[RMDB]
RNA sequence: GGGAACGACUCGAGUAGAGUCGAAAAGAUAUGGAUGUAUAAAGCUUGGAUUUAACAGCCACUUCGGAAACGAAUGCUGUUUGUCAGCUUUAUACAUCCUAAGUCAAAAGCAGAGUUCGCUCUGCAACGUUCCUAAACUCUUCGGAGUUUAGGAACGAAAAGAAACAACAACAACAAC
Reactivity to 2A3 in 0.01 (KOAc 150mM, MgCl2 10mM, bicine 150mM(pH8.5), 24C), signal-to-noise 2, nucleotides 027 to 126: g010a000u050a020u110g010g030a000u020g010u010a000u000a000a010a000g000c040u260u300g220g000a050u300u300u140a020a000c000a020g030c060c030a140c050u040u020c000g000g050a070a090a040c000g030a000a040u300g000c000u030g050u020u010u000g000u010c000a000g010c010u000u010u010a000u000a000c000a000u010c000c000u000a010a020g000u000c010a010a010a080a090g000c000a020g010a020g000u160u220c300g060c200u010c010u010g000c010a000a030
Reactivity to DMS in 0.01 (KOAc 150mM, MgCl2 10mM, bicine 150mM(pH8.5), 24C), signal-to-noise 2, nucleotides 027 to 126: g000a030u030a300u000g000g010a000u000g000u000a000u000a000a000a010g000c000u000u020g020g020a050u010u030u000a000a020c000a000g000c020c070a010c070u000u000c000g000g000a090a120a230c010g000a040a010u000g000c020u000g000u000u000u000g000u010c000a020g000c000u000u000u000a010u000a000c000a000u000c000c000u010a000a100g000u000c020a060a100a130a110g000c010a010g000a030g030u000u000c190g020c000u000c000u000g020c000a080a040